[RMDB]
RNA sequence: GGGAACGACUCGAGUAGAGUCGAAAACAACUCUGGGGAGAAAAGGGAGGAUCGGAUGGGAAGAGUAAAUCCUACGGGAAUCCGCCUGUUCCCCUGAUGUCCAGUCCCUCCCCAGUCCGAGCGAAGGGGAUCUACUAUACUUCGGUAUAGUAGAUCCAAAAGAAACAACAACAACAAC
Reactivity to DMS in 0.01 (KOAc 150mM, MgCl2 10mM, bicine 150mM(pH8.5), 24C), signal-to-noise 2, nucleotides 027 to 126: c080a020a070c160u000c000u010g000g000g030g010a110g020a100a110a130a100g010g000g010a120g000g030a040u000c020g020g010a140u030g000g000g010a060a050g010a050g000u010a030a090a060u000c020c010u010a100c130g020g010g010a030a040u030c110c100g030c140c010u010g000u020u000c030c010c020c040u000g020a110u030g010u010c040c020a080g030u010c090c020c000u000c000c010c010c000a050g000u010c090c000g000a110g020c080g020a070a070g000g000
Reactivity to 2A3 in 0.01 (KOAc 150mM, MgCl2 10mM, bicine 150mM(pH8.5), 24C), signal-to-noise 1, nucleotides 027 to 126: c000a050a110c030u010c000u100g000g000g050g000a070g080a030a140a080a080g060g020g030a040g060g000a030u160c030g000g020a070u070g070g000g000a020a000g030a030g070u050a000a030a050u020c010c000u020a060c150g040g000g030a010a090u040c040c050g020c010c040u140g230u020u030c000c000c010c000u000g030a020u030g030u000c000c000a030g130u000c020c000c010u020c030c000c000c000a000g030u000c030c020g040a050g100c050g060a130a010g050g010
Notes
This 177-nucleotide RNA was probed chemically with DMS and 2A3. It was measured as part of the RMDB library VIROID. 2A3 is a SHAPE reagent: it acylates the 2'-hydroxyl of flexible nucleotides of all four kinds. The DMS profile rests on 943 reads. The RNA was probed in 150 mM KOAc, 10 mM MgCl2 and 150 mM bicine (pH 8.5) at 24 C. The 2A3 profile rests on 1,394 reads.